[RMDB]
RNA sequence: GGGAACGACUCGAGUAGAGUCGAAAACUCGCUGCUUAAGUGAGAUGACGACCGUGCAGCCCGGCCUUUGGCGUCGCGGAAGUCACUAAAAAAGAAGGCUAGCCCAGGCGAUUCUCCAUAGCCGACGGCGAAACUUUAUGGAGCUACGGCCUGCGAGGGCGUAAGACUAGUUCGCUAGUCUUACGCCAAAAGAAACAACAACAACAAC
Reactivity to DMS in 0.01 (KOAc 150mM, MgCl2 10mM, bicine 150mM(pH8.5), 24C), signal-to-noise 1, nucleotides 027 to 156: c020u010c010g040c000u000g040c080u010u010a110a050g030u010g000a160g010a210u010g000a050c000g000a300c030c000g080u070g020c080a040g000c030c020c070g020g010c060c030u020u000u010g010g030c000g040u000c010g000c020g050g010a020a300g020u000c020a040c080u000a000a030a080a050a040a090g030a080a040g030g000c000u000a190g000c010c030c010a210g020g040c010g000a090u010u010c010u000c020c020a140u000a300g010c030c000g000a100c100g000g040c030g030a050a030a150c110u010u000u000a010u000g000g010a060g030c150u030a130c060g000g010c020c020u000g040c000g020a080g000
Reactivity to 2A3 in 0.01 (KOAc 150mM, MgCl2 10mM, bicine 150mM(pH8.5), 24C), signal-to-noise 2, nucleotides 027 to 156: c000u000c020g000c010u070g010c070u210u260a070a060g000u030g000a040g010a070u110g010a000c010g000a000c000c020g010u000g030c050a010g000c000c000c000g040g000c000c000u000u040u010g010g000c000g010u000c010g000c000g020g000a000a030g020u040c070a090c250u240a090a160a070a020a000a010g030a010a000g010g000c020u010a000g000c010c020c000a000g000g000c000g020a010u150u080c000u000c000c010a010u010a010g000c030c000g030a020c040g000g010c010g000a000a020a000c000u140u240u160a010u060g000g010a010g000c000u110a090c070g050g010c010c030u090g050c070g060a160g060